An RNA of 177 nucleotides, treated with 2A3 and DMS and read out base by base.
DMS adducts were read by reverse transcription with MarathonRT.
Source: RMDB library OK1LIB, as collected in RNAgym.
The reactions ran in a buffer of 150 mM KOAc, 10 mM MgCl2 and 150 mM bicine (pH 8.5), at 24 C.

RNA sequence: GGGAACGACUCGAGUAGAGUCGAAAAUGAGAAUACUUUUAGUACAAGCGAGUACACGCAGUAUACUGCCACUUGUGUGAGAAUACUUUUAGUACAAGCGAGUACACGCAGUAUACUGCCACUUGUGGCCGUAUUCCCCAUUCGUGGGGAAUACGGCAAAAGAAACAACAACAACAAC
Reactivity to 2A3 in 0.01 (KOAc 150mM, MgCl2 10mM, bicine 150mM(pH8.5), 24C), signal-to-noise 4, nucleotides 027 to 126: u280g050a020g080a150a110u190a230c100u080u110u050u180a130g050u160a020c030a130a050g020c020g020a010g040u090a070c040a050c120g000c000a010g000u000a000u000a010c000u000g010c000c000a010c010u030u020g010u040g050u090g090a090g110a080a070u090a090c030u050u130u180u270a050g000u010a000c020a070a000g000c010g020a000g050u100a040c050a000c030g000c010a000g000u000a010u000a000c000u000g010c000c000a020c010u010u010g030u050g040
Reactivity to DMS in 0.01 (KOAc 150mM, MgCl2 10mM, bicine 150mM(pH8.5), 24C), signal-to-noise 1, nucleotides 027 to 126: u000g000a230g130a130a210u000a000c030u000u000u000u030a070g000u020a070c150a050a150g000c060g000a060g000u000a110c300a180c260g000c030a110g000u000a000u000a000c030u000g020c000c300a000c060u000u000g040u010g000u000g000a070g040a090a200u000a060c130u000u000u040u000a100g000u000a000c300a120a220g000c000g000a080g000u030a010c000a070c300g000c050a020g000u000a010u000a000c000u020g020c000c000a000c010u000u000g010u000g000